This 177-nucleotide RNA was probed chemically with 2A3 and DMS.
DMS adducts were read by reverse transcription with MarathonRT.
For 2A3, 4,966 sequencing reads were counted.
Values cover nucleotides 27 to 126.
RNA sequence: GGGAACGACUCGAGUAGAGUCGAAAAGCGUGCAAUGGGUGAUGCGCGAUAAAGUCGCCACUUUGGAGAUUUGGAGAGAAUGCCUAAACAUCAGUAAAGAGCAAAUGACAGAUGCUAAAGCCAAGCGCCACACAUAAACUUUCGAGUUUAUGUGUGGAAAAGAAACAACAACAACAAC
Reactivity to 2A3 in 0.01 (KOAc 150mM, MgCl2 10mM, bicine 150mM(pH8.5), 24C), signal-to-noise 4, nucleotides 027 to 126: g010c020g000u020g020c020a030a160u110g060g060g010u110g020a060u060g010c050g000c020g040a010u110a050a110a010g080u040c020g030c060c000a030c030u110u080u110g070g010a100g020a090u080u080u110g060g000a050g000a010g030a090a030u080g010c010c000u020a070a070a030c020a040u110c010a020g040u100a060a120a040g070a040g010c020a050a030a100u090g020a040c030a020g050a020u050g000c000u040a100a030a000g020c010c010a030a030g040c010g050
Reactivity to DMS in 0.01 (KOAc 150mM, MgCl2 10mM, bicine 150mM(pH8.5), 24C), signal-to-noise 5, nucleotides 027 to 126: g010c040g040u000g010c030a040a060u010g000g000g000u000g030a110u010g010c030g020c020g000a060u010a070a090a100g010u000c050g020c020c020a070c150u010u010u010g010g010a090g000a050u010u000u000g000g010a080g010a080g000a080a080u010g010c020c020u000a060a070a110c050a060u000c070a040g020u010a040a080a090g010a080g010c070a030a060a070u010g010a100c090a070g010a060u000g000c020u000a050a090a130g000c030c090a060a100g010c160g010